[RMDB]
RNA sequence: GGGAACGACUCGAGUAGAGUCGAAAAUCAGCCUUCGGGCUGAAAAAAGAUAUGGAGGCCCAUGACCCAUUUUCGGAAACGAAGGAGAUGCAUGGCCUCCUAAGUCAAAAACCCUGUUCGCAGGGAACUUGUUUCGUAGAUUCGUCUACGAAACAAGAAAAGAAACAACAACAACAAC
Reactivity to 2A3 in 0.01 (KOAc 150mM, MgCl2 10mM, bicine 150mM(pH8.5), 24C), signal-to-noise 2, nucleotides 027 to 126: u010c010a020g000c010c040u100u120c300g080g020g000c000u000g000a010a010a000a010a000a010g040a010u070a010u150g010g000a020g020g040c260c230c040a030u000g010a100c000c000c100a230u180u110u130u050c060g030g000a040a100a060c060g030a010a010g060g040a240g030a010u230g130c010a010u060g010g010c000c020u020c000c010u000a010a000g020u060c000a040a030a010a170a210c010c000c000u020g060u060u080c300g010c070a010g000g000g000a010a090
Reactivity to DMS in 0.01 (KOAc 150mM, MgCl2 10mM, bicine 150mM(pH8.5), 24C), signal-to-noise 2, nucleotides 027 to 126: u000c000a000g000c000c000u000u020c300g030g040g020c000u010g020a010a010a080a140a100a080g000a040u020a300u000g000g000a040g000g030c180c040c010a000u000g000a110c060c020c010a160u000u000u000u020c000g000g000a070a080a300c000g010a030a010g020g000a090g000a100u000g020c010a000u000g000g020c020c020u020c000c000u000a000a060g000u020c050a050a090a040a200a070c000c010c010u000g030u010u010c150g050c010a030g020g010g010a000a040